Structure probing data (2A3 and DMS) for a 177-nucleotide construct.
Source: RMDB library OK2TST, as collected in RNAgym.
The RNA was probed in 150 mM KOAc, 10 mM MgCl2 and 150 mM bicine (pH 8.5) at 24 C.
For 2A3, 1,287 sequencing reads were counted.
For 2A3 the reverse transcriptase was SuperScript II with manganese.
For DMS, 1,859 sequencing reads were counted.
[RMDB]
RNA sequence: GGGAACGACUCGAGUAGAGUCGAAAACGCGCCUGGCGCGGCCUGAGCCCCGAGCAGUUCGCCAAGAUGAUCGACAGCCGCUACGAGUCGCAGAUGCUCAAGGCAGGCAUCGUCUGGACCGAUGCUGCAGUUGGCGUGUUUUCGAACACGCCAACUGAAAAGAAACAACAACAACAAC
Reactivity to 2A3 in 0.01 (KOAc 150mM, MgCl2 10mM, bicine 150mM(pH8.5), 24C), signal-to-noise 1, nucleotides 027 to 126: c030g000c010g010c110c200u160g080g000c050g010c000g040g050c000c030u060g050a090g000c020c020c020c010g020a020g000c020a020g000u070u060c010g030c030c000a020a070g040a050u110g020a030u170c060g090a040c130a050g000c020c000g000c030u030a060c090g030a020g010u030c020g030c190a050g050a140u220g000c020u020c030a020a030g090g000c110a180g060g000c050a000u010c000g000u030c010u020g060g070a020c060c030g000a010u040g000c020u030g030
Reactivity to DMS in 0.01 (KOAc 150mM, MgCl2 10mM, bicine 150mM(pH8.5), 24C), signal-to-noise 2, nucleotides 027 to 126: c040g030c020g020c020c090u000g000g000c040g000c050g000g000c030c050u010g010a120g010c050c040c010c050g020a140g010c010a040g000u000u000c030g000c010c030a070a110g030a080u010g010a040u010c120g010a070c060a050g010c030c000g000c060u000a070c300g010a030g020u000c030g010c160a110g010a120u010g010c000u000c020a090a300g010g010c020a070g000g020c060a030u000c000g010u000c030u010g000g000a070c260c000g000a010u000g010c000u000g000